The record gives the reactivity of an RNA of 177 nucleotides to 2A3 and DMS. For DMS, 909 sequencing reads were counted. The reactions ran in a buffer of 150 mM KOAc, 10 mM MgCl2 and 150 mM bicine (pH 8.5), at 24 C.

RNA sequence: GGGAACGACUCGAGUAGAGUCGAAAAUACACACAGCGCCACGGCCUGUACGUCCCUCGGCCCGACGACCCAGUCUUGGCCGAUGCCAUCAACGGGCUGGUUCGCGACGCGCUGGCGGCCGGAACCAGGCCCGUGGCGUCUUCGGACGCCACGGGCCAAAAGAAACAACAACAACAAC
Reactivity to 2A3 in 0.01 (KOAc 150mM, MgCl2 10mM, bicine 150mM(pH8.5), 24C), signal-to-noise 2, nucleotides 027 to 126: u220a010c050a000c010a000c010a060g000c020g020c000c040a070c050g020g000c000c030u060g010u080a050c050g060u040c000c000c000u030c010g000g030c000c020c010g030a040c000g020a030c040c050c020a010g000u000c020u020u090g010g000c010c000g000a010u130g070c000c010a210u200c100a190a040c110g050g010g000c000u000g020g050u030u040c040g010c040g110a020c020g030c000g000c090u110g140g000c010g000g020c000c000g020g010a030a010c000c020a030
Reactivity to DMS in 0.01 (KOAc 150mM, MgCl2 10mM, bicine 150mM(pH8.5), 24C), signal-to-noise 1, nucleotides 027 to 126: u050a000c010a200c110a140c000a180g010c030g030c150c000a060c070g000g050c030c020u090g070u000a240c060g080u000c030c000c000u000c070g000g000c120c000c300g030a060c030g000a050c000c000c100a210g000u050c000u000u010g000g000c000c220g000a010u080g000c050c140a100u000c080a000a010c140g000g050g000c000u000g000g000u000u000c000g000c210g050a000c160g020c070g000c050u000g000g020c040g000g070c070c030g000g000a030a030c090c060a000
Values cover nucleotides 27 to 126.